The record gives the reactivity of an RNA of 177 nucleotides to DMS. Reactivities are given for positions 27 through 126. For DMS, 805 sequencing reads were counted.
[RMDB]
RNA sequence: GGGAACGACUCGAGUAGAGUCGAAAAGGGUGUUAAGCACGUAGACUAUACCGUUGACAUCUCGUCCAUCAAGGAGAAGGUCUCUCAAGCUCUUAGUUCAUUUGUGUAUGAUCUACCAGUUGGGAAAAGCGCUGUGAUGUUUCGACAUCACAGCGCUAAAAGAAACAACAACAACAAC
Reactivity to DMS in 0.01 (KOAc 150mM, MgCl2 10mM, bicine 150mM(pH8.5), 24C), signal-to-noise 1, nucleotides 027 to 126: g010g030g060u000g030u000u000a060a040g020c090a040c110g020u000a040g000a120c050u000a190u010a070c090c080g000u010u020g000a030c080a020u000c030u000c050g010u000c030c000a110u020c230a030a230g040g010a010g010a160a190g030g000u000c030u000c010u020c030a070a110g010c020u000c010u000u000a050g020u000u000c010a020u000u000u000g000u000g000u000a030u000g010a020u000c090u000a110c030c010a070g030u000u010g010g010g000a000a050a130